[RMDB]
RNA sequence: GGGAACGACUCGAGUAGAGUCGAAAAAUUCAUUCGUGAAUCUUUGCGGGGUCAUUCUGGAGGUCCUGCCGAGGAUCGUACUGAAGCCUCCACGGUACGGGAGGGCAGGACCGUUGAAAGAAUGACGGAGGCACCCAAUCUGUAACUUCGGUUACAAUGGUAAUAUAAAAUUCGUUUUAUAUUACCAAAAAGAAACAACAACAACAAC
Reactivity to DMS in 0.01 (KOAc 150mM, MgCl2 10mM, bicine 150mM(pH8.5), 24C), signal-to-noise 1, nucleotides 027 to 156: a050u000u000c020a080u000u010c230g020u010g010a040a030u000c050u010u000u000g020c000g000g020g030g030u000c000a020u000u000c020u020g000g000a150g030g060u000c010c000u000g020c040c010g020a140g040g020a210u000c000g030u000a010c000u000g000a070a110g010c000c000u010c010c030a300c050g010g030u000a040c000g000g010g000a190g020g000g010c000a000g020g010a030c000c000g030u000u000g010a210a190a070g000a040a030u000g000a020c000g000g010a040g100g060c010a110c020c020c030a060a300u000c050u000g000u010a020a030c000u000u000c210g040g010u000u000a010c000a090a230
Reactivity to 2A3 in 0.01 (KOAc 150mM, MgCl2 10mM, bicine 150mM(pH8.5), 24C), signal-to-noise 2, nucleotides 027 to 156: a000u040u040c020a030u070u050c070g080u040g070a070a080u050c110u100u190u200g020c140g000g080g080g000u010c000a010u020u000c010u010g010g050a030g030g000u000c000c000u010g000c000c000g030a150g100g130a090u160c020g000u010a000c010u020g040a120a030g000c000c020u000c020c020a020c030g000g010u010a000c000g010g030g030a190g040g180g000c000a000g010g000a010c000c000g000u000u000g000a010a000a000g000a000a010u000g000a000c000g000g020a010g020g010c030a020c000c020c000a010a120u130c130u110g010u050a000a000c010u070u070c260g120g000u020u000a010c000a020a050